[RMDB]
RNA sequence: GGGAACGACUCGAGUAGAGUCGAAAAAGAUAUGGAGCUUUAAGCUUUUGACGCCUGUGCGGAGAGCCUUCUCGGAAACGAGAAGGCCUCGGAUAGCAGGCGAUAAGCUUGGGAGCUCCUAAGUCAAGAUAGUGGUAUUGUUCGCAAUACCACUAUCAAAAGAAACAACAACAACAAC
Reactivity to 2A3 in 0.01 (KOAc 150mM, MgCl2 10mM, bicine 150mM(pH8.5), 24C), signal-to-noise 2, nucleotides 027 to 126: a020g050a030u090a040u210g000g000a000g000c000u040u060u060a020a000g000c000u110u090u170u100g240a150c040g000c000c000u010g050u110g050c120g170g010a020g010a040g020c000c000u010u000c000u000c000g050g010a100a100a070c020g000a010g010a000a000g000g020c000c000u000c000g010g040a030u100a040g020c010a010g000g010c000g000a000u010a000a000g000c000u030u030g190g060g030a000g000c000u000c000c000u000a010a010g010u020c010a050a060
Reactivity to DMS in 0.01 (KOAc 150mM, MgCl2 10mM, bicine 150mM(pH8.5), 24C), signal-to-noise 4, nucleotides 027 to 126: a100g000a050u010a300u020g010g010a010g010c000u000u000u000a030a040g010c000u000u000u010u000g020a300c090g010c000c010u000g020u000g020c090g000g000a020g010a240g010c000c000u000u000c000u000c000g010g000a110a120a180c010g010a020g000a020a020g010g010c000c010u000c000g010g010a120u000a200g000c010a010g000g010c000g010a010u010a010a020g000c010u000u000g020g010g000a010g000c010u000c000c000u010a010a120g010u000c030a130a150